RNA sequence: GGGAACGACUCGAGUAGAGUCGAAAAGAAUAGGUUUGUGCUUAUCAGGAAUACGCGCAAAAAAUAGCUUUAUUUCUGGCAGUGGUCUUAGAAGCAACGGCAUUCAAAAUUAUAUUAUGCUACAAAAUGCCUCACAAUGCUACGCGAACCAGGGAGACACGCAUUACCAUUUCGAUGGUAAUGCGUGAAAAGAAACAACAACAACAAC
Reactivity to DMS in 0.01 (KOAc 150mM, MgCl2 10mM, bicine 150mM(pH8.5), 24C), signal-to-noise 1, nucleotides 027 to 156: g000a060a090u010a120g000g010u000u000u000g010u000g020c020u000u000a100u000c070a110g280g000a060a060u000a010c300g000c080g000c000a000a030a110a010a090a060u010a130g000c010u000u050u000a070u040u000u000c010u000g010g090c010a070g020u000g080g010u010c080u010u020a210g020a050a090g040c040a060a070c090g000g030c010a060u000u000c110a220a100a040a110u000u000a100u000a200u000u000a090u000g020c040u030a160c090a000a010a120a070u010g000c000c020u010c050a120c060a060a100u000g030c000u000a000c100g010c000g000a000a040c020c040a130g020g010g040a140g000a300
Reactivity to 2A3 in 0.01 (KOAc 150mM, MgCl2 10mM, bicine 150mM(pH8.5), 24C), signal-to-noise 3, nucleotides 027 to 156: g060a040a080u160a080g090g000u070u060u030g020u040g010c010u060u140a050u150c050a060g010g160a060a030u040a060c080g020c010g010c010a010a000a000a000a000a150u090a010g010c000u100u090u120a030u090u110u030c010u020g040g000c040a050g000u050g010g020u000c050u100u120a050g010a160a020g040c010a070a020c100g020g000c010a010u020u080c060a080a020a180a060u220u050a100u060a060u270u140a170u290g020c020u020a060c030a020a210a010a010u030g000c000c000u070c000a110c000a020a080u030g000c010u040a030c050g000c060g040a020a020c010c030a020g050g020g010a010g030a020
About this RNA
The record gives the reactivity of an RNA of 207 nucleotides to DMS and 2A3. Conditions: 150 mM KOAc, 10 mM MgCl2 and 150 mM bicine (pH 8.5), 24 C. For 2A3, 1,212 sequencing reads were counted. 2A3 adducts were read by reverse transcription with SuperScript II with manganese. The DMS profile rests on 1,318 reads. Source: RMDB library OK3TST, as collected in RNAgym.